Chemical mapping of a 177-nucleotide RNA with 2A3 and DMS.
For DMS the reverse transcriptase was MarathonRT.
It was measured as part of the RMDB library OK1LIB.
RNA sequence: GGGAACGACUCGAGUAGAGUCGAAAAAGAUCGGGGGCCUGGGACGCGCUGGCCGAGGUGUGAUCGGACCCCAGGCUAGCCACAAAGGGCACUUGGCCCCAGGGCUAGGAGAGCGAGGGGAGAGCACGUAGGGGAUAGGAUUCGUCCUAUCCCCUACAAAAGAAACAACAACAACAAC
Reactivity to 2A3 in 0.01 (KOAc 150mM, MgCl2 10mM, bicine 150mM(pH8.5), 24C), signal-to-noise 5, nucleotides 027 to 126: a000g090a070u110c050g010g000g000g000g000c010c010u040g020g010g030a040c070g030c030g000c060u020g050g010c020c010g000a070g000g070u140g020u060g050a210u110c050g040g110a040c000c000c000c010a000g030g000c000u000a000g000c000c000a130c040a090a130a040g060g010g000c080a050c130u120u100g130g010c020c000c010c000a030g020g000g000c020u030a010g020g060a080g030a000g040c050g010a090g010g020g020g000a060g010a030g060c060a020c130
Reactivity to DMS in 0.01 (KOAc 150mM, MgCl2 10mM, bicine 150mM(pH8.5), 24C), signal-to-noise 5, nucleotides 027 to 126: a090g010a060u010c070g010g010g010g000g000c020c020u000g000g010g010a100c110g000c100g030c030u000g010g000c030c020g000a070g000g000u010g020u030g010a140u020c120g010g000a090c050c020c000c030a150g030g010c000u000a010g020c010c040a120c140a060a160a150g000g020g030c030a100c130u020u020g000g000c010c000c030c070a170g000g000g030c040u000a060g010g010a050g000a140g000c090g000a100g000g020g000g000a110g000a120g010c120a070c190